Notes: An RNA of 177 nucleotides, treated with DMS and 2A3 and read out base by base. Conditions: 150 mM KOAc, 10 mM MgCl2 and 150 mM bicine (pH 8.5), 24 C. Source: RMDB library OK1LIB, as collected in RNAgym.

RNA sequence: GGGAACGACUCGAGUAGAGUCGAAAAGAAGUGCGGCCAUUACCGGGCACAAGGACGUUCAUCAGGCCAUUACCGGUGAUGUUCGUCCGAUUACACUUGACGGGUCUUUACUGACGUCUUGUGGAGAGGGUAGCAGCACGUUCGCGUGUUGCUACCCAAAAGAAACAACAACAACAAC
Reactivity to DMS in 0.01 (KOAc 150mM, MgCl2 10mM, bicine 150mM(pH8.5), 24C), signal-to-noise 3, nucleotides 027 to 126: g000a120a120g050u030g010c050g010g030c010c050a020u000u020a110c050c000g000g000g080c030a030c090a200a090g000g000a000c010g000u010u000c010a000u010c070a100g010g000c070c030a040u020u100a120c210c100g040g030u000g000a000u000g020u000u000c000g000u000c000c000g020a030u040u040a110c030a030c010u000u000g000a020c000g010g000g000u040c080u050u000u030a130c230u020g000a190c020g030u000c040u010u000g050u000g000g000a130g010a140
Reactivity to 2A3 in 0.01 (KOAc 150mM, MgCl2 10mM, bicine 150mM(pH8.5), 24C), signal-to-noise 4, nucleotides 027 to 126: g110a170a020g070u090g040c050g030g050c020c020a010u030u060a070c050c010g000g000g040c050a020c010a060a060g020g000a000c020g010u030u000c010a010u020c020a060g230g030c000c020a060u100u130a150c050c100g000g000u020g010a000u000g010u010u000c000g000u000c000c010g000a010u030u060a020c010a000c000u010u010g010a010c020g010g070g080u030c010u020u170u070a120c130u100g090a030c000g000u000c000u000u000g010u020g000g030a040g040a020